RNA sequence: GGGAACGACUCGAGUAGAGUCGAAAACGAUGAAACUGCACAAUUAUCUACAGUUAAAAACGAAGAUGGCACACCUGUAAACUUGUUUGAACAAGACAUGGUGGCAUUACGUGCAACUAUGCAUGUAGCAUUGCAUAUUGCUGAUGAUAAAGCGUUAUACCAUCGGCCUAUUCGUAGGCCGAUGGUAAAAAGAAACAACAACAACAAC
Reactivity to 2A3 in 0.01 (KOAc 150mM, MgCl2 10mM, bicine 150mM(pH8.5), 24C), signal-to-noise 2, nucleotides 027 to 156: c040g010a040u080g050a010a040a020c040u030g030c030a020c010a090a290u010u010a020u060c130u240a090c050a050g000u020u090a040a040a060a000a000c040g040a110a150g060a060u100g260g060c070a020c000a000c160c020u000g060u080a020a220a090c020u000u080g100u190u160u300g070a110a000c000a000a000g050a030c040a030u060g010g000u000g020g000c000a000u000u020a020c030g110u040g000c020a000a080c050u020a000u000g000c010a050u050g020u030a090g100c080a110u030u030g000c000a000u000a020u050u050g000c000u010g000a030u000g000a020u010a030a100a010g000c000g050u120u080a010